RNA sequence: GGGAACGACUCGAGUAGAGUCGAAAAUGCCCAGCGGGGCUUGGCGGUCAUGGGCUUUCUCUCCGGAGGGAGAGAAAGUACCAUGAUAGCUGGGGGAAUCGGCGAGGCCCGGAAGGGAGCAGCCGUGCCUAUAGUUCAGGUUCGCCUGAACUAUAGGAAAAGAAACAACAACAACAAC
Reactivity to DMS in 0.01 (KOAc 150mM, MgCl2 10mM, bicine 150mM(pH8.5), 24C), signal-to-noise 4, nucleotides 027 to 126: u010g010c010c000c010a190g010c130g010g020g000g000c300u000u000g020g010c020g010g030u000c000a000u000g000g000g010c000u000u000u000c000u000c000u000c000c010g030g060a230g000g000g000a020g000a010g000a000a000a000g000u000a020c010c000a000u000g000a010u000a040g030c020u000g010g020g010g000g000a150a070u010c010g010g010c000g000a300g000g000c010c010c000g010g040a130a130g000g000g000a010g000c010a300g000c000c000g020u000g000
Reactivity to 2A3 in 0.01 (KOAc 150mM, MgCl2 10mM, bicine 150mM(pH8.5), 24C), signal-to-noise 1, nucleotides 027 to 126: u090g030c000c000c010a030g130c090g070g070g020g000c050u050u060g030g020c010g000g000u000c010a010u000g000g020g010c010u000u000u000c000u000c000u010c010c020g200g130a170g120g080g020a000g020a000g000a000a000a000g010u020a200c000c000a010u000g000a000u000a020g040c000u020g000g000g000g020g000a020a130u110c010g010g000c010g000a020g060g030c000c000c000g000g050a060a040g020g000g000a010g010c000a000g020c000c000g000u010g010